[RMDB]
Description: The record gives the reactivity of an RNA of 207 nucleotides to 2A3. For 2A3 the reverse transcriptase was SuperScript II with manganese. The RNA was probed in 150 mM KOAc, 10 mM MgCl2 and 150 mM bicine (pH 8.5) at 24 C.
RNA sequence: GGGAACGACUCGAGUAGAGUCGAAAAUCGCUCCAGGUUUCCCCGGGGAUCCCUGAAGCGCUCCUCCGAGCCGCCUUCUUUUUUCUUUUCUGCUCAGGAGGUCAGGUGUGAACCACAGGAACCACGAGUUUAGUUCCGAGGAACCAACUGCGGUUCCGAAAUAUUGUAACUUCGGUUACAAUAUUUCAAAAGAAACAACAACAACAAC
Reactivity to 2A3 in 0.01 (KOAc 150mM, MgCl2 10mM, bicine 150mM(pH8.5), 24C), signal-to-noise 2, nucleotides 027 to 156: u130c010g000c010u010c020c020a040g000g000u000u060u060c020c050c010c020g010g040g000g010a020u000c000c010c020u010g030a120a030g290c060g130c220u080c000c020u000c000c060g000a000g040c030c020g120c120c020u210u150c070u180u240u180u150u230u140c090u110u250u130u000c020u060g000c010u020c020a090g000g010a000g000g000u010c010a000g020g020u100g030u060g260a050a010c010c070a030c080a080g050g000a000a000c010c000a000c020g000a000g020u030u030u090a060g000u000u000c000c000g030a100g020g000a010a010c020c030a120a190c250u300g150c100g050g000u000u000c000c000